[RMDB]
Description:
Structure probing data (2A3 and DMS) for a 177-nucleotide construct. It was measured as part of the RMDB library RFM100. DMS adducts were read by reverse transcription with MarathonRT. In probing experiments dimethyl sulfate is read out at A N1 and C N3, which are open when not base-paired. Reactivities are given for positions 27 through 126. The reactions ran in a buffer of 150 mM KOAc, 10 mM MgCl2 and 150 mM bicine (pH 8.5), at 24 C.
RNA sequence: GGGAACGACUCGAGUAGAGUCGAAAACGCCUCAGAAGGGCGCGGUGAAUACGUCCCUGCUCCUUGCACACACCGCCCGUCAAAGCACCCGAGUGAGGUCCGGAUGAGGCCUGGUCACCAGGUCGAAGGAGAUUCACGAUUUCGAUCGUGAAUCUCCAAAAGAAACAACAACAACAAC
Reactivity to 2A3 in 0.01 (KOAc 150mM, MgCl2 10mM, bicine 150mM(pH8.5), 24C), signal-to-noise 3, nucleotides 027 to 126: c040g000c000c000u000c000a110g040a220a130g040g000g000c030g000c000g060g050u030g100a130a070u200a120c050g080u100c020c000c000u000g040c010u030c000c050u000u110g000c010a010c000a000c000a010c040c010g020c000c030c010g070u090c050a070a050a000g030c050a050c000c000c010g010a020g020u070g020a020g010g000u000c010c020g000g050a050u060g080a070g000g000c000c000u030g000g040u220c050a050c140c010a020g030g000u000c030g020a040a050
Reactivity to DMS in 0.01 (KOAc 150mM, MgCl2 10mM, bicine 150mM(pH8.5), 24C), signal-to-noise 1, nucleotides 027 to 126: c190g000c020c000u000c100a090g000a270a300g000g040g000c030g000c100g000g040u070g000a030a040u040a030c030g000u010c020c000c000u000g000c010u010c090c040u010u030g010c040a070c160a080c010a130c020c000g000c020c010c040g010u010c040a050a160a120g000c080a040c040c000c000g010a150g010u000g020a010g030g000u000c010c000g000g010a140u050g000a100g000g000c000c000u010g050g010u090c060a060c040c000a040g020g010u000c000g000a120a090